[RMDB]
RNA sequence: GGGAACGACUCGAGUAGAGUCGAAAAACCUACUGGAUGCUAGGCAGGAGCAAAGGACACUCACCUGCUCCCCACUCCAGGGUCUCGUGUCUCUGACUCCAUGGCAGGACAAAGGUGAGAGCCCGCCAUGCUUCGGGGCGACCUACCGGGCUCCGUCUAAUUAAAUGGCAUUCGUGCCAUUUAAUUAAAAAGAAACAACAACAACAAC
Reactivity to DMS in 0.01 (KOAc 150mM, MgCl2 10mM, bicine 150mM(pH8.5), 24C), signal-to-noise 2, nucleotides 027 to 156: a080c030c010u010a100c020u000g000g000a080u000g050c030u000a050g020g040c040a060g020g010a050g010c000a070a080a160g010g020a210c110a100c110u000c020a060c030c000u000g020c020u000c030c020c010c060a140c050u000c010c020a080g030g020g020u000c030u010c080g030u000g020u010c040u030c030u000g020a140c020u020c120c060a060u000g000g000c020a080g010g020a040c050a050a140a080g010g000u000g030a140g040a170g010c010c000c020g000c070c030a130u000g020c030u000u010c050g010g030g010g070c050g000a110c020c010u000a110c120c060g000g020g020c020u000c010c020g000u000c040
Reactivity to 2A3 in 0.01 (KOAc 150mM, MgCl2 10mM, bicine 150mM(pH8.5), 24C), signal-to-noise 3, nucleotides 027 to 156: a010c030c010u080a070c010u020g060g000a030u160g040c080u110a240g030g030c140a090g010g010a000g000c040a110a170a170g060g010a130c100a080c200u170c030a080c040c020u020g020c010u010c010c000c010c010a030c010u020c010c030a030g010g020g040u020c060u070c050g130u090g040u020c040u000c030u200g020a060c000u060c040c050a070u080g030g040c010a000g030g000a040c080a100a160a040g040g010u100g020a220g010a030g030c010c020c020g020c010c000a050u060g000c020u120u120c070g050g000g020g000c030g020a040c010c000u080a080c050c060g040g040g000c030u030c020c010g020u020c010
Structure probing data (DMS and 2A3) for a 207-nucleotide construct.
For DMS, 3,008 sequencing reads were counted.
The data come from the RNA Mapping Database (RMDB), library OK3TST.